Structure probing data (DMS and 2A3) for a 177-nucleotide construct. DMS adducts were read by reverse transcription with MarathonRT. For DMS, 2,180 sequencing reads were counted. Values are in units of 0.01, from 0 to 300, in steps of 10. The data come from the RNA Mapping Database (RMDB), library OK1LIB. For 2A3 the reverse transcriptase was SuperScript II with manganese.

[RMDB]
RNA sequence: GGGAACGACUCGAGUAGAGUCGAAAAACAGACAACCUGCUCCCCAUGUCUCCUGAGGAGUUUGACGAGGUGUCUCGGAUAGUGGGCUCUGUAGAAUUCGACAGUAUGGUGAGUACCACGGCUGGCCGGUGGUCCACAUUUUCGAAUGUGGACCACCAAAAGAAACAACAACAACAAC
Reactivity to DMS in 0.01 (KOAc 150mM, MgCl2 10mM, bicine 150mM(pH8.5), 24C), signal-to-noise 2, nucleotides 027 to 126: a100c070a010g000a010c050a110a050c000c010u010g030c000u000c030c020c010c030a040u030g000u050c030u000c010c070u000g000a080g020g020a020g000u000u000u020g000a130c120g020a110g000g010u020g000u060c000u000c140g000g000a070u010a060g040u000g000g010g000c030u000c000u130g030u050a100g030a160a120u010u020c050g000a060c060a070g000u010a040u000g000g100u010g020a070g000u010a050c010c050a060c060g000g010c010u010g000g020c090c090
Reactivity to 2A3 in 0.01 (KOAc 150mM, MgCl2 10mM, bicine 150mM(pH8.5), 24C), signal-to-noise 3, nucleotides 027 to 126: a000c030a000g070a010c030a050a080c040c010u020g010c010u050c000c050c000c000a060u110g070u070c040u030c040c000u100g000a090g000g030a040g070u060u100u220g190a130c070g010a020g090g000u040g060u010c000u000c020g070g010a070u080a130g020u020g020g000g010c010u010c000u020g060u080a020g070a190a140u190u130c040g060a010c020a060g150u140a060u180g080g040u110g020a020g020u030a100c000c000a010c010g010g000c030u020g040g030c010c090